[RMDB]
RNA sequence: GGGAACGACUCGAGUAGAGUCGAAAACAACGUGUCGCUUGACGAGAUACUGAUACAGGACGCAAGCCUAAGCGCCGAUUGGGUCAAUAUCACACCCGACACUACAGCAAACGACCCACUUACCACAACGAACGAUGAGCUUGCCCUUGCACAAAUCCCUUGCAUUAGACUUCGGUCUAAUGCAAGGAAAAGAAACAACAACAACAAC
Reactivity to DMS in 0.01 (KOAc 150mM, MgCl2 10mM, bicine 150mM(pH8.5), 24C), signal-to-noise 1, nucleotides 027 to 156: c040a080a170c100g020u000g000u060c070g000c030u000u010g050a170c080g020a220g000a050u010a020c050u000g010a100u010a090c080a070g000g000a040c020g030c010a030a140g010c150c020u010a060a180g000c000g000c000c010g020a240u000u030g040g030g090u010c040a130a120u030a070u000c080a170c000a090c100c000c010g010a020c070a000c010u000a080c060a140g050c070a080a150a100c100g010a140c000c000c010a060c070u000u000a080c030c170a140c040a120a090c120g000a030a060c020g020a060u000g030a030g000c010u010u000g000c000c000c000u070u040g010c000a030c080a080a140a100u000c010
Reactivity to 2A3 in 0.01 (KOAc 150mM, MgCl2 10mM, bicine 150mM(pH8.5), 24C), signal-to-noise 4, nucleotides 027 to 156: c050a010a030c070g030u050g010u020c020g040c190u120u140g030a030c040g020a040g010a120u090a110c020u030g020a020u030a140c070a030g010g010a040c080g000c010a000a040g010c000c060u110a140a060g020c000g030c030c060g100a090u060u110g050g000g010u020c020a030a030u070a060u220c040a050c000a010c070c060c020g050a020c020a000c060u150a050c060a060g040c040a150a010a020c040g020a020c020c010c010a010c040u040u160a040c000c060a060c040a190a100c050g110a110a010c010g080a110u060g010a020g020c000u000u020g000c000c000c000u000u100g020c070a060c010a030a090a120u100c000
Chemical mapping of a 207-nucleotide RNA with DMS and 2A3.
2A3 adducts were read by reverse transcription with SuperScript II with manganese.
The RNA was probed in 150 mM KOAc, 10 mM MgCl2 and 150 mM bicine (pH 8.5) at 24 C.